[RMDB]
RNA sequence: GGGAACGACUCGAGUAGAGUCGAAAAGUGGAGUACGUGAAAAACCAGAUCCUUACCCAGGCCAACACGGCGAUGCUCGCUCAGGCCAACAUGAAGACUCAGUCUGUGCUCCAGUUGCUGGGGUAAGAAUCAAGAUAAUUUUCGAAUUAUCUUGAUUAAAAGAAACAACAACAACAAC
Reactivity to 2A3 in 0.01 (KOAc 150mM, MgCl2 10mM, bicine 150mM(pH8.5), 24C), signal-to-noise 7, nucleotides 027 to 126: g070u050g000g010a020g020u070a040c070g060u120g110a080a040a040a050a020c040c010a030g010a100u030c000c000u020u030a060c010c010c010a040g030g000c010c010a080a020c060a060c110g010g010c030g040a070u220g080c090u090c090g010c000u050c050a020g000g030c030c010a010a020c050a080u190g100a080a030g050a050c020u020c130a020g070u010c040u080g030u050g020c000u010c010c010a030g080u140u160g050c050u040g000g030g000g000u020a030a030g070
Reactivity to DMS in 0.01 (KOAc 150mM, MgCl2 10mM, bicine 150mM(pH8.5), 24C), signal-to-noise 9, nucleotides 027 to 126: g030u000g010g010a050g020u000a040c070g020u010g000a060a070a080a130a110c060c050a080g000a130u000c040c010u000u000a100c020c000c020a170g020g000c030c030a060a130c220a080c190g000g010c020g020a090u000g010c130u010c040g010c030u010c140a220g010g000c000c020a070a090c140a030u010g010a080a090g010a060c070u010c100a090g000u000c030u000g010u000g000c020u000c020c020a070g010u010u000g010c050u000g010g000g010g010u000a020a040g000